Conditions: 150 mM KOAc, 10 mM MgCl2 and 150 mM bicine (pH 8.5), 24 C. This 207-nucleotide RNA was probed chemically with 2A3. The 2A3 profile rests on 2,031 reads. 2A3 adducts were read by reverse transcription with SuperScript II with manganese.
[RMDB]
RNA sequence: GGGAACGACUCGAGUAGAGUCGAAAAGGGGUCCUCUUGAGGUCCGUGGGAGCAUCGAUCGUACUGAAGCCUCCACGGUACGGGAGCUCCCAACGGACCAAUGAUGGAGGACGGAGGCACCCAAACUUUUCACCCCACUUCGGUGGGGUGAAAAGAACCACAUUUCUACGUUCGCGUAGAAAUGUGGAAAAGAAACAACAACAACAAC
Reactivity to 2A3 in 0.01 (KOAc 150mM, MgCl2 10mM, bicine 150mM(pH8.5), 24C), signal-to-noise 1, nucleotides 027 to 156: g010g030g060g030u010c010c010u010c000u000u000g050a010g000g020u020c000c000g000u010g020g000g000a000g010c020a040u300c090g010a000u000c000g010u010a000c000u000g040a110a020g010c000c010u000c010c010a010c000g010g010u010a000c000g010g010g000a030g000c000u000c020c020c010a010a010c000g000g000a000c000c000a010a010u010g000a000u000g000g000a000g000g000a000c000g030g010a000g000g010c000a010c000c010c000a060a110a170c010u010u000u000u000c000a000c010c000c000c000a000c020u000u110c190g060g000u000g010g030g000g000u000g000a000a000a000a000g000a000a000